[RMDB]
RNA sequence: GGGAACGACUCGAGUAGAGUCGAAAAGAUAUGGAACGUUUGGUGGGAGAAUGGGUUCGGAAACGAACCGCAUUCAUCGAUCACCUGACGUUCCUAAGUCAAAGUAGAGGCGUUCGCGCCUCUACAAGGUAUUAACACGCUUCGGCGUGUUAAUACCAAAAGAAACAACAACAACAAC
Reactivity to DMS in 0.01 (KOAc 150mM, MgCl2 10mM, bicine 150mM(pH8.5), 24C), signal-to-noise 1, nucleotides 027 to 126: g000a000u000a180u030g000g010a020a020c010g020u000u000u000g020g000u010g000g000g000a080g010a040a000u000g000g010g010u000u000c000g010g000a070a050a120c000g000a010a000c000c000g000c010a000u000u000c020a200u010c220g000a160u000c000a000c000c010u020g000a010c010g000u000u010c000c000u010a000a060g010u020c050a120a150a150g020u000a020g010a010g000g050c010g020u010u020c300g020c040g010c000c010u000c010u010a010c020a030a030
Reactivity to 2A3 in 0.01 (KOAc 150mM, MgCl2 10mM, bicine 150mM(pH8.5), 24C), signal-to-noise 1, nucleotides 027 to 126: g010a000u050a020u030g020g010a010a000c000g000u030u010u050g040g000u000g020g120g150a250g000a000a030u000g010g030g000u000u030c000g000g000a020a010a020c000g000a000a010c040c010g040c030a040u020u000c010a040u250c120g110a250u190c000a010c000c000u000g000a000c000g000u000u000c000c010u000a000a010g000u010c020a150a030a150g020u010a010g020a000g020g020c020g060u080u080c300g020c010g030c030c040u010c010u000a000c010a020a010

This 177-nucleotide RNA was probed chemically with DMS and 2A3. Values cover nucleotides 27 to 126. The data come from the RNA Mapping Database (RMDB), library TTRDES. For 2A3 the reverse transcriptase was SuperScript II with manganese. For DMS, 1,630 sequencing reads were counted. Conditions: 150 mM KOAc, 10 mM MgCl2 and 150 mM bicine (pH 8.5), 24 C.